Chemical mapping of a 207-nucleotide RNA with 2A3. The RNA was probed in 150 mM KOAc, 10 mM MgCl2 and 150 mM bicine (pH 8.5) at 24 C. Reactivities are rounded to 0.1 and cut off at 0 and 3. Reactivities are given for positions 27 through 156.
RNA sequence: GGGAACGACUCGAGUAGAGUCGAAAAAGGAGCUAAGAAGCCCCUACAGGGCCCAGAGGUGGGGACUGAGCCUUAGUUGGAGGGCUGAGGUCAGCCCCUGACCAUGUAGCCUCUACAGAUGGACAAGGCAGUGAUCCUCCCUGCUCCCACCCUGAGGGAGGAGUAGUUGUUUCGACAACUACUCCUCAAAAGAAACAACAACAACAAC
Reactivity to 2A3 in 0.01 (KOAc 150mM, MgCl2 10mM, bicine 150mM(pH8.5), 24C), signal-to-noise 1, nucleotides 027 to 156: a000g080g050a030g030c050u130a160a060g070a170a060g300c080c000c000c000u050a200c080a170g000g000g000c040c080c130a000g000a010g080g020u200g000g010g000g000a000c020u020g030a030g020c020c020u010u010a050g070u100u070g060g060a140g030g030g000c040u060g070a080g000g060u070c010a000g010c020c010c000c000u050g020a010c000c000a000u110g130u140a010g050c050c030u130c010u040a040c040a130g130a250u210g040g020a000c080a020a050g010g010c010a080g040u040g100a180u040c000c000u000c020c040c000u030g000c050u040c000c000c000a020c000c000c030u030g060a040g080g090